[RMDB]
The data come from the RNA Mapping Database (RMDB), library OK2TRN.
Structure probing data (DMS and 2A3) for a 177-nucleotide construct.
Reactivities are given for positions 27 through 126.
The reactions ran in a buffer of 150 mM KOAc, 10 mM MgCl2 and 150 mM bicine (pH 8.5), at 24 C.
For 2A3, 2,214 sequencing reads were counted.
For DMS the reverse transcriptase was MarathonRT.
The DMS profile rests on 1,138 reads.

RNA sequence: GGGAACGACUCGAGUAGAGUCGAAAAGCCUGGGCCGCACAAGUGGUCGAUGAACCAAUCGCACGCCAGCUUGGCAACCUGUUCCAGCGUGCCUGGUUCUUCGAAUAGGUGUGUGGCGCCGGGGACCGGCCGGAAGGAGAUUCGUCUCCUUCCGGCCAAAAGAAACAACAACAACAAC
Reactivity to DMS in 0.01 (KOAc 150mM, MgCl2 10mM, bicine 150mM(pH8.5), 24C), signal-to-noise 1, nucleotides 027 to 126: g010c010c000u000g020g000g020c000c020g020c010a020c010a040a020g000u020g010g000u000c010g020a020u010g000a020a020c020c010a020a100u000c300g010c030a020c010g030c010c010a080g010c030u010u000g010g020c230a060a070c170c070u010g000u010u010c120c140a120g000c010g020u000g010c030c140u000g000g000u000u000c020u000u000c000g010a000a060u010a090g000g000u000g000u000g010u000g000g020c010g040c020c000g000g000g010g010a100c070c040
Reactivity to 2A3 in 0.01 (KOAc 150mM, MgCl2 10mM, bicine 150mM(pH8.5), 24C), signal-to-noise 1, nucleotides 027 to 126: g100c000c000u000g000g020g000c000c000g020c000a010c000a040a050g130u050g120g040u060c000g000a010u010g000a000a000c010c010a020a050u120c080g000c020a010c020g000c000c030a020g020c040u060u060g030g000c020a040a090c030c090u160g090u230u070c050c000a010g010c000g000u000g040c010c000u000g040g000u000u010c010u030u030c000g030a020a050u070a140g220g000u000g010u010g000u020g000g010c060g000c010c000g020g000g010g010a030c040c000